Source: RMDB library OK2TST, as collected in RNAgym. This 177-nucleotide RNA was probed chemically with DMS and 2A3. For DMS the reverse transcriptase was MarathonRT. The reactions ran in a buffer of 150 mM KOAc, 10 mM MgCl2 and 150 mM bicine (pH 8.5), at 24 C. The 2A3 profile rests on 5,786 reads. 2A3 adducts were read by reverse transcription with SuperScript II with manganese.

RNA sequence: GGGAACGACUCGAGUAGAGUCGAAAAAGAGGAAGGGGGUUUGGCUUUAGCUUUGACAGCUUGUAAGCUAGAAUGCCAAGCCUCUGACAACGAGACCUGUCCAGGUCAGCUUCCUGUUGGACCAGGGCACGUCUUGUAGAUUCGUCUACAAGACGUGAAAAGAAACAACAACAACAAC
Reactivity to DMS in 0.01 (KOAc 150mM, MgCl2 10mM, bicine 150mM(pH8.5), 24C), signal-to-noise 8, nucleotides 027 to 126: a110g010a100g010g010a090a210g000g000g010g000g010u000u000u000g000g010c010u000u000u000a010g010c000u000u000u000g020a070c120a140g010c280u010u010g020u010a030a010g010c000u000a010g000a040a050u010g010c000c000a010a020g000c000c000u000c000u000g000a190c090a070a080c080g000a140g000a030c010c010u000g000u010c050c020a130g010g010u000c000a060g000c100u000u000c030c030u000g010u010u000g010g000a040c030c040a050g000g000g000
Reactivity to 2A3 in 0.01 (KOAc 150mM, MgCl2 10mM, bicine 150mM(pH8.5), 24C), signal-to-noise 3, nucleotides 027 to 126: a000g120a040g080g040a030a060g020g000g010g000g010u000u000u000g000g000c000u000u040u020a000g000c000u040u030u110g150a050c030a030g140c090u180u180g120u060a000a000g000c000u000a020g090a150a040u160g000c000c000a010a000g000c000c000u000c010u000g000a010c010a040a020c020g060a020g040a150c000c000u010g020u000c020c030a010g010g020u000c030a010g060c040u060u050c020c020u040g060u060u100g040g020a040c030c030a050g000g030g000